[RMDB]
RNA sequence: GGGAACGACUCGAGUAGAGUCGAAAAGAGAUGCUACGAACUCUGCCGUACGACAAGCUCUGGAAAUUGUCGUAGAGAGUACGGAAAAAUGUACUUACAGAGCAAGGUAGAGGAAAGUAGCAUCGAAGGGAUAAGUAUUCUUCGGAAUACUUAUCCCAAAAGAAACAACAACAACAAC
Reactivity to 2A3 in 0.01 (KOAc 150mM, MgCl2 10mM, bicine 150mM(pH8.5), 24C), signal-to-noise 6, nucleotides 027 to 126: g160a010g000a000u000g000c000u010a000c010g080a140a030c020u000c000u010g010c010c020g080u100a090c080g050a030c100a090a020g040c030u030c070u190g050g060a080a190a120u110u080g120u130c010g050u130a050g040a010g000a000g070u000a010c010g140g110a130a040a040a010a080u300g000u010a000c000u030u040a060c040a040g040a030g070c050a060a050g020g000u000a000g000a000g010g030a020a080a000g000u000a000g010c000a000u010c000g010a010a000
Reactivity to DMS in 0.01 (KOAc 150mM, MgCl2 10mM, bicine 150mM(pH8.5), 24C), signal-to-noise 3, nucleotides 027 to 126: g010a160g020a010u010g000c000u000a010c000g000a090a220c000u000c000u000g020c070c050g000u020a080c140g000a020c120a040a030g020c030u030c120u010g030g000a040a010a090u000u030g000u000c050g020u000a040g000a130g000a030g000u000a010c040g000g050a030a030a100a030a130u010g010u000a050c030u020u000a150c090a080g010a120g000c130a140a140g000g030u010a000g010a020g020g000a000a110a220g000u000a000g010c010a020u000c020g000a080a070